[RMDB]
RNA sequence: GGGAACGACUCGAGUAGAGUCGAAAAGGAGAUCGAAGAUGACCGACGUCAGCACGGUCGGGAUGUAGGUCCGCAUGCAUCCAAGUUGACGAAACUUGACGAUUUCCAAAGCGGACAAGAAGUCAAAGCUCGACUAAAUCUUCGGAUUUAGUCGAGCAAAAGAAACAACAACAACAAC
Reactivity to 2A3 in 0.01 (KOAc 150mM, MgCl2 10mM, bicine 150mM(pH8.5), 24C), signal-to-noise 2, nucleotides 027 to 126: g040g000a010g000a000u000c000g030a010a170g020a130u260g020a000c000c000g120a130c010g100u220c030a000g050c160a050c000g040g030u020c040g000g060g000a000u040g000u000a000g000g090u000c000c000g010c010a000u000g000c000a000u000c000c000a010a010g000u000u070g010a040c130g070a080a040a000c010u000u020g000a020c020g020a010u000u090u000c000c000a000a150a000g030c030g000g000a000c010a000a040g200a070a000g060u130c040a040a080a000
Reactivity to DMS in 0.01 (KOAc 150mM, MgCl2 10mM, bicine 150mM(pH8.5), 24C), signal-to-noise 1, nucleotides 027 to 126: g010g000a000g000a030u000c000g000a100a030g000a140u140g000a000c000c000g000a080c000g070u040c260a110g010c000a090c060g000g020u000c000g000g080g000a000u000g000u000a000g000g000u000c000c000g000c000a120u000g060c060a000u000c000c000a070a000g000u000u000g000a090c300g000a300a050a060c060u000u030g000a230c000g000a000u000u000u000c000c030a000a110a190g000c010g050g010a000c000a100a060g040a100a110g000u060c160a000a120a220
Chemical mapping of a 177-nucleotide RNA with 2A3 and DMS.
2A3 adducts were read by reverse transcription with SuperScript II with manganese.
The reactions ran in a buffer of 150 mM KOAc, 10 mM MgCl2 and 150 mM bicine (pH 8.5), at 24 C.
Source: RMDB library OK1LIB, as collected in RNAgym.